[RMDB]
RNA sequence: GGGAACGACUCGAGUAGAGUCGAAAAAAUGCCGCCUCAGUUCCAAGCUCUUUCGUGGCACUGUAAACAGUCCUAAUGAGUUAGGGGCAGUCAACCACGUUGCGAAGCUAAAUUAUCUGGUCGAGAGUUACGAUUCCCUACUUCGGUAGGGAAUCAACUGCUAAGUAAGAUUCGUCUUACUUAGCAGAAAAGAAACAACAACAACAAC
Reactivity to DMS in 0.01 (KOAc 150mM, MgCl2 10mM, bicine 150mM(pH8.5), 24C), signal-to-noise 3, nucleotides 027 to 156: a040a030u010g010c020c010g010c010c010u010c010a100g030u000u000c020c010a220a300g000c020u000c010u000u010u000c020g040u000g020g000c040a040c000u010g000u000a060a090a100c040a150g040u000c000c010u000a040a060u000g010a200g030u000u000a030g010g000g000g010c000a030g000u000c020a090a050c020c000a040c030g010u000u000g010c080g010a090a130g020c030u000a020a030a070u000u000a090u010c050u000g000g010u000c030g010a100g020a150g030u000u010a070c080g010a040u000u000c000c000c000u000a010c020u000u000c290g030g020u000a000g010g010g010a000a010u000c000a040a150
Reactivity to 2A3 in 0.01 (KOAc 150mM, MgCl2 10mM, bicine 150mM(pH8.5), 24C), signal-to-noise 6, nucleotides 027 to 156: a000a010u090g040c020c010g020c010c010u030c020a060g040u090u020c020c010a060a020g000c020u020c030u040u050u040c030g010u040g000g020c110a010c030u020g010u060a090a170a110c040a070g080u060c010c000u050a090a030u130g120a070g230u020u020a020g010g000g020g000c000a000g010u010c010a030a060c020c010a010c020g020u020u030g050c060g130a100a030g000c030u060a050a120a110u180u160a080u110c060u080g040g000u070c060g030a020g010a000g180u060u070a060c080g010a000u000u010c000c000c000u000a000c000u020u050c120g070g000u010a000g000g020g010a000a000u000c000a000a000
The record gives the reactivity of an RNA of 207 nucleotides to DMS and 2A3. 2A3 adducts were read by reverse transcription with SuperScript II with manganese. The DMS profile rests on 7,154 reads.